An RNA of 207 nucleotides, treated with 2A3 and read out base by base. For 2A3, 614 sequencing reads were counted. For 2A3 the reverse transcriptase was SuperScript II with manganese. The reactions ran in a buffer of 150 mM KOAc, 10 mM MgCl2 and 150 mM bicine (pH 8.5), at 24 C.
RNA sequence: GGGAACGACUCGAGUAGAGUCGAAAACUGGCGCUGCCGCACAUCAUCCUCACCCGCCAGGAUGGCGACCAGCACCGCUACCUGCAGGCCGACCGCGACAGCUACGACGGCGUGCGCGCGUACUUCUACGACGUGAACAGCGCAAAGAAGCAAGAGGGGAUGAUUACAACUUCGGUUGUAAUCAUCCAAAAGAAACAACAACAACAAC
Reactivity to 2A3 in 0.01 (KOAc 150mM, MgCl2 10mM, bicine 150mM(pH8.5), 24C), signal-to-noise 1, nucleotides 027 to 156: c050u040g020g010c020g030c000u020g010c000c020g020c000a090c010a050u170c000a010u030c040c020u020c020a080c000c040c000g040c080c010a020g010g000a130u060g030g040c020g070a160c040c000a010g000c000a000c010c030g000c060u050a170c000c030u020g000c040a020g200g000c000c020g050a080c070c080g010c000g040a140c100a150g030c090u150a110c090g170a040c000g000g050c080g020u040g020c030g010c010g000c000g000u030a090c010u150u000c050u030a100c110g190a020c000g080u060g060a010a110c040a110g020c000g000c020a000a120a120g040a030a010g040c130a040a110g100a010g100g070